[RMDB]
RNA sequence: GGGAACGACUCGAGUAGAGUCGAAAAGUGGUGCGCGGAGAGGGUAACCGCCGGCGCGCGUCACUGAUAUAUCCACCGGGGGGUAAGGGGAGAAAAGGAUACAGCGCGACGAAGUUAGCACGCUGCCGAAAUGUACCCACAUUCGUGUGGGUACAAAGAGACAAGAAACAUUCGUGUUUCUUGUCUCAAAAGAAACAACAACAACAAC
Reactivity to DMS in 0.01 (KOAc 150mM, MgCl2 10mM, bicine 150mM(pH8.5), 24C), signal-to-noise 1, nucleotides 027 to 156: g020u000g000g010u000g010c030g020c000g020g030a070g000a130g030g000g000u000a100a130c010c030g020c050c000g080g020c040g020c030g020c000g030u000c010a010c040u000g000a140u010a150u010a130u010c000c010a120c070c070g030g000g000g040g040g040u000a050a060g000g010g010g010a120g000a090a070a070a070g000g000a150u010a020c040a010g020c020g030c020g020a130c070g010a130a080g010u000u000a210g030c090a030c060g000c020u000g000c020c070g000a070a100a140u000g020u000a000c000c000c000a010c010a130u030u000c220g040u020g010u000g010g000g040u000a010c010a010a020a110
Reactivity to 2A3 in 0.01 (KOAc 150mM, MgCl2 10mM, bicine 150mM(pH8.5), 24C), signal-to-noise 1, nucleotides 027 to 156: g000u000g000g000u030g000c020g000c010g070g070a110g000a140g280g030g020u130a080a090c000c030g020c040c000g070g020c020g000c000g000c000g010u000c000a000c010u000g000a000u040a030u030a030u150c010c050a070c050c090g010g000g000g000g000g020u030a050a040g080g000g000g000a010g050a020a060a020a010g000g000a000u010a080c030a000g010c050g020c000g110a070c050g020a130a000g100u060u050a020g020c000a010c040g000c010u040g040c000c000g060a090a050a020u050g000u000a000c000c030c000a000c000a020u000u030c150g060u010g000u000g020g000g010u000a000c000a000a000a000
Record summary:
Conditions: 150 mM KOAc, 10 mM MgCl2 and 150 mM bicine (pH 8.5), 24 C. Chemical mapping of a 207-nucleotide RNA with DMS and 2A3. For 2A3 the reverse transcriptase was SuperScript II with manganese. The 2A3 profile rests on 724 reads.